[RMDB]
RNA sequence: GGGAACGACUCGAGUAGAGUCGAAAACAAGUAUGAUCUGGAGUUUGUGAGCCCUGUCCUGUCUAGAACCCAGAAAUCAUAAUGAAUUAGCCAGAGCCAGAAAGGCCUUGUCUAGAGCCCCAUUUUCUAUCUCAAGGGCAUUGGCUUUAGGUUCCAGACCGUAUAGGGAAUUCGUUCCCUAUACGGUAAAAGAAACAACAACAACAAC
Reactivity to DMS in 0.01 (KOAc 150mM, MgCl2 10mM, bicine 150mM(pH8.5), 24C), signal-to-noise 2, nucleotides 027 to 156: c090a100a140g020u000a060u010g000a050u010c000u020g000g010a160g020u000u000u000g010u000g020a090g000c040c010c040u040g040u010c040c020u000g040u010c000u000a150g020a040a100c040c020c020a110g010a050a080a090u000c050a040u000a100a120u010g000a150a140u010u010a100g010c020c040a060g010a050g000c020c010a100g000a080a060a190g000g010c010c010u000u010g010u000c010u010a070g010a090g030c160c050c050c080a190u000u000u000u000c030u000a060u000c020u010c030a040a070g010g040g040c050a110u010u010g010g000c040u000u000u000a050g040g020u010u010c010c010a150g010
Reactivity to 2A3 in 0.01 (KOAc 150mM, MgCl2 10mM, bicine 150mM(pH8.5), 24C), signal-to-noise 3, nucleotides 027 to 156: c010a010a090g060u060a100u070g030a020u020c010u010g020g010a150g080u040u080u090g150u150g030a040g000c020c010c000u000g040u050c000c030u050g020u010c020u030a050g020a050a010c000c000c000a020g090a050a130a040u040c030a030u020a040a060u160g090a030a100u130u030a100g040c030c010a020g020a000g040c030c000a050g110a200a110a000g030g040c000c010u020u010g030u030c020u020a050g000a050g090c010c110c040c010a030u200u150u060u010c050u050a220u100c020u000c060a050a010g030g020g000c010a040u050u090g000g000c000u040u010u030a120g000g000u080u000c040c010a010g010